[RMDB]
RNA sequence: GGGAACGACUCGAGUAGAGUCGAAAAGAUAUGGACCGUGAACUACACCAUGGAGACCAACAGCGGUAUUAUUCUCGGAAACGAGAAUAAUACCGACAUGGUUGAGGUGGUGCACGGUCCUAAGUCAGUUAAAGAAGAGGUUCGCCUCUUCUUUAACAAAAGAAACAACAACAACAAC
Reactivity to 2A3 in 0.01 (KOAc 150mM, MgCl2 10mM, bicine 150mM(pH8.5), 24C), signal-to-noise 2, nucleotides 027 to 126: g040a030u080a050u150g010g000a000c010c000g010u010g010a040a070c130u280a030c300a000c020c000a000u050g110g030a100g040a100c020c030a060a120c150a180g160c020g000g000u000a010u000u000a000u000u000c000u000c010g020g000a070a080a060c010g000a000g000a000a000u000a000a000u000a000c000c000g000a000c000a000u040g000g050u020u070g030a080g040g130u030g020g000u020g000c010a010c010g000g000u000c000c000u000a000a000g010u010c030a010
Reactivity to DMS in 0.01 (KOAc 150mM, MgCl2 10mM, bicine 150mM(pH8.5), 24C), signal-to-noise 7, nucleotides 027 to 126: g010a060u010a300u010g000g010a000c000c000g010u010g000a090a050c120u030a300c010a020c010c000a010u000g000g020a300g000a020c020c020a020a120c300a190g010c010g000g000u010a000u000u000a010u000u000c010u000c000g000g000a080a090a220c010g020a000g010a020a000u000a010a010u000a000c000c000g000a010c070a130u000g010g010u010u000g010a300g000g010u000g010g000u000g010c010a000c030g000g000u000c000c000u000a020a040g010u000c030a210